[RMDB]
RNA sequence: GGGAACGACUCGAGUAGAGUCGAAAAGCGAUCUUCGCACGCUCCUCGACAGACCGCGGCCCAUCCGGACGUUCCGGAACACGCUCGAACAACGCCCGCGAGGCCCGCUGAUCAGCUUCGGACACCCACGCCGAAUACACCCGCAGCGUGGUCACACGUACUGCCUAAAUUUCGAUUUAGGCAGUACAAAAGAAACAACAACAACAAC
Reactivity to DMS in 0.01 (KOAc 150mM, MgCl2 10mM, bicine 150mM(pH8.5), 24C), signal-to-noise 2, nucleotides 027 to 156: g010c050g000a090u000c030u010u000c040g000c040a160c050g030c030u010c020c020u030c000g040a090c070a080g030a050c000c000g020c000g020g000c020c020c010a200u010c040c030g010g010a100c140g030u000u000c030c030g010g010a110a090c070a070c050g000c010u010c050g020a060a090c030a140a140c040g000c010c000c020g050c010g000a110g000g010c010c020c000g020c020u010g010a080u010c060a120g000c080u000u000c030g010g010a080c040a120c080c020c030a090c040g010c020c010g000a040a070u010a090c080a090c050c000c000g030c090a050g010c010g000u010g090g000u000c020a100c070a080c080
Reactivity to 2A3 in 0.01 (KOAc 150mM, MgCl2 10mM, bicine 150mM(pH8.5), 24C), signal-to-noise 4, nucleotides 027 to 156: g030c020g040a070u060c060u140u110c120g010c060a040c030g040c020u050c010c010u010c010g040a030c030a050g020a050c020c060g010c040g030g000c040c020c000a050u010c010c010g060g010a090c110g100u180u030c010c010g010g020a020a020c060a010c030g030c020u050c050g060a090a030c030a050a050c050g020c040c010c000g050c040g030a070g020g000c000c030c000g030c020u030g010a120u080c040a020g030c020u030u020c010g020g010a030c010a080c080c020c020a020c100g000c000c010g010a040a030u140a080c100a100c020c040c040g030c040a000g000c010g050u120g000g000u050c030a030c000a000c140